Structure probing data (2A3 and DMS) for a 177-nucleotide construct. Conditions: 150 mM KOAc, 10 mM MgCl2 and 150 mM bicine (pH 8.5), 24 C.

RNA sequence: GGGAACGACUCGAGUAGAGUCGAAAAUAUCAGCGUUGGCCGCAACGGCGGUUCGGCUGUGUCCAGCCACUACGAAGCGCCGUUCGCGUUCACCGGCGGUACCAUCACCCAGGUCACCGUCGACGUGGCGAUAGAGUUGUUUCGACAACUCUAUCGCAAAAGAAACAACAACAACAAC
Reactivity to 2A3 in 0.01 (KOAc 150mM, MgCl2 10mM, bicine 150mM(pH8.5), 24C), signal-to-noise 1, nucleotides 027 to 126: u110a030u060c030a030g050c050g140u120u090g000g000c000c000g020c000a020a030c030g000g020c000g010g110u000u010c090g100g090c150u050g010u020g110u090c150c030a070g070c070c010a030c050u140a030c080g010a000a010g120c010g000c020c000g060u020u010c050g000c000g010u020u010c010a040c030c000g010g030c000g000g030u000a000c000c000a020u100c090a080c000c020c000a020g020g010u060c120a000c000c000g020u030c000g030a030c060g080u150g100
Reactivity to DMS in 0.01 (KOAc 150mM, MgCl2 10mM, bicine 150mM(pH8.5), 24C), signal-to-noise 2, nucleotides 027 to 126: u000a100u000c090a110g040c070g010u010u000g010g000c160c010g030c030a030a050c000g020g000c010g010g020u020u000c030g010g030c100u000g040u010g030u010c160c150a100g000c130c020a090c080u000a170c070g010a010a010g000c010g000c020c040g000u000u000c090g020c010g020u000u000c040a110c160c050g020g020c020g010g000u000a000c000c000a030u000c160a080c050c030c030a100g000g040u000c110a050c000c010g000u000c010g020a030c120g010u000g000
About this RNA: Source: RMDB library OK2TRN, as collected in RNAgym.